About this RNA
The record gives the reactivity of an RNA of 207 nucleotides to 2A3. The 2A3 profile rests on 449 reads.
RNA sequence: GGGAACGACUCGAGUAGAGUCGAAAAUUCUGCAGGGGAGGGUGCUGUGUCUUUGGGAAGGGCAAUACUGAUUGCAUGGUGGCCCUGGGAGCUGUGCCACUCUUGAAGGUCCUGCCUGGCGUUAAUAUUUGGAUAUAUUUUCAAAGAGGGAGAAUCCAACACUGUACACUUUCGAGUGUACAGUGUUAAAAGAAACAACAACAACAAC
Reactivity to 2A3 in 0.01 (KOAc 150mM, MgCl2 10mM, bicine 150mM(pH8.5), 24C), signal-to-noise 1, nucleotides 027 to 156: u060u000c020u080g000c030a030g020g000g010g000a120g040g020g000u100g000c120u010g080u060g040u080c190u100u030u050g010g000g050a070a060g110g000g040c030a020a040u100a260c070u110g130a170u130u110g040c100a130u060g010g030u040g020g000c030c000c000u000g020g020g000a020g010c050u090g020u040g030c000c010a000c000u030c000u010u000g020a110a030g020g010u040c010c000u060g020c000c020u040g020g020c050g040u060u060a040a000u030a170u090u140u060g000g000a000u010a000u020a010u100u040u020u090c090a090a060a000g040a020g060g010g010a090g040a020a000u180c040c020